[RMDB]
RNA sequence: GGGAACGACUCGAGUAGAGUCGAAAAUAAACACCUCGAAUGAGGUGGAGUAUGGUGCAGAUAAGAGGCUCGACAGAUGCACCAUAAAGCGAGCCUACAAAGGUCGAGGAAAACUCGACCCCAAAAACGUCAUCUACGUGUUCGCACGUGGAUGACGAAAAGAAACAACAACAACAAC
Reactivity to DMS in 0.01 (KOAc 150mM, MgCl2 10mM, bicine 150mM(pH8.5), 24C), signal-to-noise 3, nucleotides 027 to 126: u020a160a090a160c020a000c020c010u000c000g000a140a100u020g010a010g000g020u000g010g000a100g010u010a000u010g000g020u000g000c010a030g010a040u000a080a050g000a070g000g000c020u010c020g010a120c210a080g010a090u010g000c020a000c020c010a020u000a000a040a050g010c060g000a010g010c000c000u000a080c180a020a070a060g010g000u000c000g010a000g020g010a080a050a100a080c010u000c010g000a010c000c010c060c030a030a030a060a050a090
Reactivity to 2A3 in 0.01 (KOAc 150mM, MgCl2 10mM, bicine 150mM(pH8.5), 24C), signal-to-noise 6, nucleotides 027 to 126: u100a000a060a010c000a000c000c000u010c030g180a220a300u300g000a010g010g000u010g000g000a020g020u080a060u090g000g000u000g000c010a020g070a110u160a190a040g040a050g110g000c000u010c010g030a040c040a090g170a110u110g000c000a000c000c000a010u020a000a010a010g070c010g000a000g000c000c000u030a050c050a030a090a010g010g000u000c000g010a010g010g080a100a110a110a100c000u000c000g000a000c000c000c000c000a080a080a000a010a010